[RMDB]
RNA sequence: GGGAACGACUCGAGUAGAGUCGAAAAAAGAUAUGGAAAGACUGGAGUCGAUCUAAGGGACGCAGAUACGCUCUCGGAAACGAGAGCGUGUAGUCCCUGUCGACGAUGAAAGUCUUUCCUAAGUCAAGAUUAAUACACACUUCGGUGUGUAUUAAUCAAAAGAAACAACAACAACAAC
Reactivity to DMS in 0.01 (KOAc 150mM, MgCl2 10mM, bicine 150mM(pH8.5), 24C), signal-to-noise 5, nucleotides 027 to 126: a100a090g000a040u000a300u010g000g010a020a010a010g010a010c000u000g020g000a300g000u000c010g010a070u000c070u000a230a020g010g010g020a010c000g040c290a160g000a080u010a020c010g010c000u000c000u000c000g010g000a070a080a190c010g000a010g020a000g000c000g000u000g020u000a090g010u000c000c000c000u000g000u000c150g000a020c010g010a030u000g000a300a130a010g000u000c000u000u000u000c000c000u000a010a090g000u000c030a140a150
Reactivity to 2A3 in 0.01 (KOAc 150mM, MgCl2 10mM, bicine 150mM(pH8.5), 24C), signal-to-noise 1, nucleotides 027 to 126: a000a000g060a030u100a030u130g000g000a010a000a000g000a000c030u050g020g010a000g000u010c000g180a300u080c080u100a050a090g000g000g010a000c020g000c180a030g010a300u130a050c040g030c020u020c000u000c000g040g050a030a050a010c020g020a000g010a020g000c020g000u000g000u010a010g000u010c000c010c000u000g000u020c010g000a000c000g000a020u020g000a010a000a010g000u000c000u000u000u020c000c000u010a010a000g000u000c020a010a120